Chemical mapping of a 177-nucleotide RNA with DMS and 2A3. In probing experiments dimethyl sulfate is read out at A N1 and C N3, which are open when not base-paired. The reactions ran in a buffer of 150 mM KOAc, 10 mM MgCl2 and 150 mM bicine (pH 8.5), at 24 C. Values cover nucleotides 27 to 126. For 2A3, 10,976 sequencing reads were counted. Source: RMDB library OK2TRN, as collected in RNAgym.
RNA sequence: GGGAACGACUCGAGUAGAGUCGAAAACACAAGCUGACCUUCCGCGAGAACGCCAAAGCCAAGACAGACCACGGGGCGGAGAUCGUGUACAAGUCGCCAGUGGUGUCUGGGGACACGUCUCCACGGCCCCUAUUAACGCAUUCGUGCGUUAAUAGGGAAAAGAAACAACAACAACAAC
Reactivity to DMS in 0.01 (KOAc 150mM, MgCl2 10mM, bicine 150mM(pH8.5), 24C), signal-to-noise 7, nucleotides 027 to 126: c070a100c150a090a080g000c060u010g010a090c060c020u010u000c020c030g010c080g000a080g010a060a100c090g000c020c030a060a090a110g000c040c020a080a080g010a100c070a070g000a110c050c040a080c100g010g010g010g030c060g010g010a020g010a040u010c050g010u000g000u000a050c060a120a060g000u000c020g020c000c000a140g010u010g030g030u010g000u000c010u000g000g000g000g000a040c040a020c050g000u000c000u000c010c010a130c160g020g000c090
Reactivity to 2A3 in 0.01 (KOAc 150mM, MgCl2 10mM, bicine 150mM(pH8.5), 24C), signal-to-noise 5, nucleotides 027 to 126: c060a000c020a040a020g040c060u060g090a110c010c020u040u050c020c040g040c030g030a050g010a160a030c030g010c040c020a080a050a020g050c020c010a030a030g040a040c040a030g100a030c020c010a030c060g100g030g030g020c020g030g000a010g010a060u230c070g030u040g030u110a040c040a100a060g030u020c020g030c040c010a070g070u090g120g030u040g020u020c020u020g020g030g050g010a010c010a010c050g010u010c000u010c010c010a020c030g070g000c000